[RMDB]
RNA sequence: GGGAACGACUCGAGUAGAGUCGAAAAGACGGAAAAGAUCGAACCUAAGAAGAUCAGGAAGUGUAAGCCGAAUCCUAGGGCUCCUAGGGACGCAUCGUCAGAUGCGAAAUAAACACUAACGUCGAAAGAUGAGCCAUCGAUUCGUCGAUGGCUCAUCAAAAGAAACAACAACAACAAC
Reactivity to DMS in 0.01 (KOAc 150mM, MgCl2 10mM, bicine 150mM(pH8.5), 24C), signal-to-noise 1, nucleotides 027 to 126: g000a010c020g040g010a180a060a090a120g010a000u000c000g000a080a100c100c160u040a050a100g000a050a140g000a000u000c030a050g020g000a050a010g000u000g000u000a100a220g010c140c050g000a040a030u000c000c000u000a000g000g000g000c150u040c000c010u010a000g030g030g000a140c070g000c000a000u070c110g020u110c300a030g040a000u000g020c020g000a230a090a060u020a000a020a020c050a000c030u000a030a150c000g000u010c000g000a150a000a120
Reactivity to 2A3 in 0.01 (KOAc 150mM, MgCl2 10mM, bicine 150mM(pH8.5), 24C), signal-to-noise 1, nucleotides 027 to 126: g000a000c000g010g000a070a000a020a000g060a050u050c000g000a030a130c000c000u060a030a030g040a070a000g020a000u150c050a180g120g130a020a140g000u000g000u000a060a000g200c000c000g160a000a170u120c000c000u000a000g010g040g010c040u090c000c000u000a050g010g010g000a000c000g000c000a000u000c000g150u200c040a050g000a050u000g000c000g000a120a040a000u100a000a040a000c040a030c000u070a110a000c010g000u000c000g000a130a050a000